[RMDB]
RNA sequence: GGGAACGACUCGAGUAGAGUCGAAAAGGCGUAAGCCGUUCCAGUCGUCCUGGCUGAGGCGCCUAUAACUCAGUAGCAACAUCCCAGGACGUCAUCGCUUAUAGGCUGCUCCGUUCACCAGAGCUCACUGGUGUUCGGCUAAGAUUAAAGAGCUCGCGAGAUAACCACAGUUCGCUGUGGUUAUCUCAAAAGAAACAACAACAACAAC
Reactivity to 2A3 in 0.01 (KOAc 150mM, MgCl2 10mM, bicine 150mM(pH8.5), 24C), signal-to-noise 1, nucleotides 027 to 156: g000g000c010g050u160a150a050g080c000c000g000u030u040c000c000a000g240u150c020g000u000c020c000u000g040g000c020u020g010a000g000g060c080g010c000c000u030a020u030a000a000c020u000c000a030g020u120a040g200c150a140a130c030a250u140c060c000c000a000g030g000a010c000g000u070c070a050u120c120g050c130u080u000a000u000a030g010g050c000u020g000c010u000c000c000g010u000u000c010a010c000c000a000g020a040g040c020u000c040a300c020u000g000g000u000g000u000u010c000g000g020c000u000a030a000g010a030u140u300a230a170a150g010a000g030c080u090c050g120c110